[RMDB]
RNA sequence: GGGAACGACUCGAGUAGAGUCGAAAAGAUAUGGAAUACGAAGGAAACACUUUCAUAUGGAGAAGAACGCUCGGAAACGAGCGUACUUCUAUGAAGUAUGAAAGUGGAGUACGAGUAUUCCUAAGUCCUUUCUUAAUGACUUCGGUCAUUAAGAAAGAAAAGAAACAACAACAACAAC
Reactivity to 2A3 in 0.01 (KOAc 150mM, MgCl2 10mM, bicine 150mM(pH8.5), 24C), signal-to-noise 2, nucleotides 027 to 126: g040a030u100a070u260g000g010a010a000u020a040c050g140a220a060g040g010a040a010a000c010a010c020u030u000u000c010a000u010a010u040g040g010a040g000a020a000g010a030a020c000g000c010u010c010g050g070a060a090a060c010g010a010g010c010g000u010a000c000u000u000c000u090a300u050g000a000a000g020u000a010u000g000a000a010a020g000u000g000g020a000g000u000a010c010g000a020g000u000a000u000u020c000c000u000a090a010g010u080c000
Reactivity to DMS in 0.01 (KOAc 150mM, MgCl2 10mM, bicine 150mM(pH8.5), 24C), signal-to-noise 3, nucleotides 027 to 126: g020a100u000a300u010g000g000a060a000u000a000c000g000a240a290g000g010a200a200a170c010a000c010u000u000u000c010a000u010a000u000g020g000a010g010a010a010g010a120a000c010g040c000u000c000g000g000a060a090a280c000g000a020g020c000g020u010a010c000u000u000c010u000a230u010g000a120a260g000u010a010u000g010a020a010a000g010u000g010g010a000g000u000a100c010g000a300g010u000a000u000u000c000c010u000a060a140g000u000c050
Source information
Structure probing data (2A3 and DMS) for a 177-nucleotide construct. The reactions ran in a buffer of 150 mM KOAc, 10 mM MgCl2 and 150 mM bicine (pH 8.5), at 24 C. For 2A3, 5,592 sequencing reads were counted.